[RMDB]
The record gives the reactivity of an RNA of 177 nucleotides to DMS and 2A3.

RNA sequence: GGGAACGACUCGAGUAGAGUCGAAAAUGAUGAUUUUGAAAGGUUUGUAUUAGAUGAGAUCAAUGGUAUGCCCAACGGCCGGGGCCUUCGUGAUUUUGCAAAUUUGAUCCUGCAAACAGACAGCAUCUGUUGAGUUACUCUUCGGAGUAACUCAACAAAAAGAAACAACAACAACAAC
Reactivity to DMS in 0.01 (KOAc 150mM, MgCl2 10mM, bicine 150mM(pH8.5), 24C), signal-to-noise 2, nucleotides 027 to 126: u070g000a000u000g000a090u000u030u060u000g070a140a090a060g010g020u000u000u000g000u030a020u000u010a040g000a250u000g000a090g000a030u010c010a000a060u020g000g000u000a030u000g030c000c000c040a110a130c160g000g000c020c030g020g000g010g030c000c020u000u000c050g000u000g000a020u000u000u000u000g030c060a050a090a020u000u000u020g000a060u000c020c020u000g080c040a060a000a000c140a050g000a120c110a020g070c100a090u000c000
Reactivity to 2A3 in 0.01 (KOAc 150mM, MgCl2 10mM, bicine 150mM(pH8.5), 24C), signal-to-noise 3, nucleotides 027 to 126: u120g020a010u020g050a070u050u120u130u250g170a170a130a100g060g020u010u010u000g090u060a260u210u230a120g110a190u190g040a120g000a130u000c000a020a020u080g060g080u060a030u060g090c010c000c000a050a050c060g030g000c020c040g050g000g000g000c000c000u080u030c110g100u060g100a090u010u120u080u230g050c030a040a070a110u140u140u020g000a010u000c000c000u000g030c000a000a030a000c000a030g140a040c020a010g020c000a010u050c030
The data come from the RNA Mapping Database (RMDB), library OK1LIB. DMS adducts were read by reverse transcription with MarathonRT.